[RMDB]
RNA sequence: GGGAACGACUCGAGUAGAGUCGAAAAGACAAAUGCAGCAUAUUAGGCUAAGCAGGAAAGGGACGGUAGCACCUGGUGUCAGUUCAUACGGUGUGAUGCAUCUGCGUCGUGCACACAUGCACCCAAACCAUCCUACGUUUUUCGAAACGUAGGAUGGAAAAGAAACAACAACAACAAC
Reactivity to 2A3 in 0.01 (KOAc 150mM, MgCl2 10mM, bicine 150mM(pH8.5), 24C), signal-to-noise 4, nucleotides 027 to 126: g060a010c030a010a100a020u130g000c020a020g020c020a040u090a080u220u150a090g080g040c010u040a040a020g020c020a030g000g100a080a080a030g060g020g020a020c040g030g040u020a020g020c020a030c040c020u030g000g050u010g040u070c050a050g020u060u060c040a040u080a140c070g000g030u040g000u030g020a140u040g010c030a030u020c040u120g060c020g050u120c040g000u030g020c010a010c000a000c000a030u090g050c030a050c010c010c000a010a020a030
Reactivity to DMS in 0.01 (KOAc 150mM, MgCl2 10mM, bicine 150mM(pH8.5), 24C), signal-to-noise 4, nucleotides 027 to 126: g000a100c080a040a060a080u000g030c030a030g020c030a050u010a080u000u000a120g020g010c010u000a080a070g030c020a060g000g000a040a080a070g000g000g000a050c120g010g010u000a060g010c050a060c060c030u010g020g010u010g020u000c050a080g000u000u000c060a070u000a090c120g000g030u010g010u000g000a090u000g010c020a030u000c070u000g020c090g020u000c110g020u010g010c030a030c040a020c040a040u010g020c070a090c020c020c040a050a080a180
The data come from the RNA Mapping Database (RMDB), library M2PK90. An RNA of 177 nucleotides, treated with 2A3 and DMS and read out base by base. The reactions ran in a buffer of 150 mM KOAc, 10 mM MgCl2 and 150 mM bicine (pH 8.5), at 24 C. Reactivities are given for positions 27 through 126. The DMS profile rests on 4,169 reads. For 2A3, 6,299 sequencing reads were counted.